[RMDB]
RNA sequence: GGGAACGACUCGAGUAGAGUCGAAAAGAUAUGGACUGGCGGAGACAUGAAGAGUGCUCGGAAACGAGCAUCCUUCAACAGCUCCGCAGUCCUAAGUCAAAAGAUACCGUUGUUCGCAACGGUAUCAGGGACAAUGUUUGUUCGCAAACAUUGUCCCAAAAGAAACAACAACAACAAC
Reactivity to DMS in 0.01 (KOAc 150mM, MgCl2 10mM, bicine 150mM(pH8.5), 24C), signal-to-noise 1, nucleotides 027 to 126: g000a020u000a060u010g000g000a010c010u000g020g030c000g010g000a020g040a010c190a120u070g020a010a000g000a050g040u000g000c000u000c000g020g010a030a010a060c000g020a020g020c000a010u010c030c000u000u000c040a180a040c210a180g010c000u000c000c010g000c010a020g020u000c000c000u000a000a030g000u000c000a120a060a100a220g000a020u000a000c000c020g000u010u000g020u020u020c250g000c010a040a020c000g000g020u000a000u000c000a030
Reactivity to 2A3 in 0.01 (KOAc 150mM, MgCl2 10mM, bicine 150mM(pH8.5), 24C), signal-to-noise 2, nucleotides 027 to 126: g000a000u020a000u020g000g000a010c020u050g160g300c020g050g000a010g040a030c160a300u300g010a030a010g010a010g020u010g000c000u000c000g030g000a000a000a000c010g000a010g030c000a010u060c000c000u000u010c020a070a030c120a080g000c000u000c010c000g000c000a000g000u010c000c000u000a000a000g010u000c010a000a020a080a180g010a000u010a010c000c010g010u000u030g040u080u140c300g000c120a000a000c000g020g000u010a000u010c000a000
Source: RMDB library TTRDES, as collected in RNAgym.
The record gives the reactivity of an RNA of 177 nucleotides to DMS and 2A3.
The DMS profile rests on 1,469 reads.
The RNA was probed in 150 mM KOAc, 10 mM MgCl2 and 150 mM bicine (pH 8.5) at 24 C.
Reactivities are given for positions 27 through 126.